[RMDB]
About this RNA:
This 177-nucleotide RNA was probed chemically with 2A3. Reactivities are given for positions 27 through 126. For 2A3, 13,607 sequencing reads were counted. 2A3 adducts were read by reverse transcription with SuperScript II with manganese. The RNA was probed in 150 mM KOAc, 10 mM MgCl2 and 150 mM bicine (pH 8.5) at 24 C. It was measured as part of the RMDB library TTRDEL.
RNA sequence: GGGAACGACUCGAGUAGAGUCGAAAAGAUAUGGAGCGUGGGAGCCACUUGUCGGAAACGACAAGAUGGCAUCGAUCACGUCUCCUAAGUCAAAACGCCAUUAAUCACUUCGGUGAUUAAUGGCGAACAGAGCAUAUCAGUUCGCUGAUAUGCUCUGAAAAGAAACAACAACAACAAC
Reactivity to 2A3 in 0.01 (KOAc 150mM, MgCl2 10mM, bicine 150mM(pH8.5), 24C), signal-to-noise 4, nucleotides 027 to 126: g010a010u040a020u130g000g000a000g000c000g000u010g000g020g030a040g000c000c000a010c000u010u000g010u020c010g020g030a100a030a050c000g000a000c010a010a010g030a030u010g010g000c020a060u120c000g010a010u060c000a000c020g160u070c030u000c000c000u000a120a000g040u020c010a020a000a120a130c020g000c000c000a000u000u010a000a010u000c000a000c020u040u150c300g170g010u000g000a000u000u000a000a000u000g010g000c010g000a000a000